RNA sequence: GGGAACGACUCGAGUAGAGUCGAAAACUUCAGUGUCUGCAUGUGGGAAGUGGGCUCCUUCACCUACCUCACAGGGCUGUUGUGAGGGGCGCUGUGAUGCGGUUCCAAAGCACAGGGCUUGGCGCACCAUGGUUAUAUCGUUCGCGAUAUAACCAUGAAAAGAAACAACAACAACAAC
Reactivity to DMS in 0.01 (KOAc 150mM, MgCl2 10mM, bicine 150mM(pH8.5), 24C), signal-to-noise 9, nucleotides 027 to 126: c050u000u010c060a070g010u000g010u010c020u010g010c050a060u000g010u000g010g010g010a090a110g020u010g010g010g020c040u010c050c020u010u010c060a120c020c020u000a110c020c010u000c050a050c090a060g010g000g020c100u000g010u010u000g010u000g000a060g000g000g000g020c040g010c040u010g010u000g000a070u010g010c140g020g010u000u000c070c040a070a120a110g000c030a080c070a050g000g010g000c030u000u000g010g000c060g010c080a100c160
Reactivity to 2A3 in 0.01 (KOAc 150mM, MgCl2 10mM, bicine 150mM(pH8.5), 24C), signal-to-noise 7, nucleotides 027 to 126: c020u090u070c040a040g020u010g040u060c020u060g020c020a060u060g020u070g070g010g050a080a070g060u110g020g050g010c030u050c020c000u050u050c030a040c020c010u040a060c010c000u020c010a040c010a030g020g080g040c090u090g050u270u030g010u040g010a020g000g010g000g000c090g000c050u030g020u050g050a050u080g010c030g030g020u130u060c040c000a070a050a010g050c030a030c030a070g070g050g010c010u060u070g030g000c040g000c000a040c020
The record gives the reactivity of an RNA of 177 nucleotides to DMS and 2A3. High 2A3 reactivity points to a flexible backbone, as in loops and unpaired stretches. 2A3 adducts were read by reverse transcription with SuperScript II with manganese. The 2A3 profile rests on 18,542 reads.